[RMDB]
RNA sequence: GGGAACGACUCGAGUAGAGUCGAAAAAUCGUUUUAAUUAGCAUAACUGUAAUGGUGACCAUAUGUGCAGGCCUACAAUUAGUGCCACCACAUCAUGCCCUGAACGGUCGCUGCUGCAACUGCAACACCCUAGUGACGAUUUCGAUCGUCACUAGGGAAAAGAAACAACAACAACAAC
Reactivity to 2A3 in 0.01 (KOAc 150mM, MgCl2 10mM, bicine 150mM(pH8.5), 24C), signal-to-noise 2, nucleotides 027 to 126: a000u070c000g020u060u010u050u160a250a180u120u120a050g000c010a000u030a160a090c020u030g000u050a020a040u070g020g000u020g010a020c000c000a020u020a040u170g000u010g010c050a030g040g000c010c020u040a050c190a260a300u160u100a060g010u070g150c010c000a020c040c000a020c000a010u080c010a030u120g030c030c000c000u040g020a040a010c080g000g000u010c010g000c050u040g010c000u020g000c010a020a020c060u040g040c030a040a060c010a080
Reactivity to DMS in 0.01 (KOAc 150mM, MgCl2 10mM, bicine 150mM(pH8.5), 24C), signal-to-noise 2, nucleotides 027 to 126: a090u000c110g010u000u020u000u000a050a200u020u000a180g050c010a040u000a080a110c040u040g000u000a060a080u010g000g020u000g000a040c140c000a050u000a010u020g030u000g000c110a150g000g010c040c010u020a050c230a030a100u000u000a060g040u010g030c000c010a160c300c000a010c100a020u000c060a080u000g000c030c020c010u000g000a120a150c090g020g000u010c020g010c020u010g000c060u020g010c050a010a020c080u000g000c040a080a090c250a090
The record gives the reactivity of an RNA of 177 nucleotides to 2A3 and DMS. The reactions ran in a buffer of 150 mM KOAc, 10 mM MgCl2 and 150 mM bicine (pH 8.5), at 24 C. Source: RMDB library OK2TST, as collected in RNAgym. 2A3 adducts were read by reverse transcription with SuperScript II with manganese.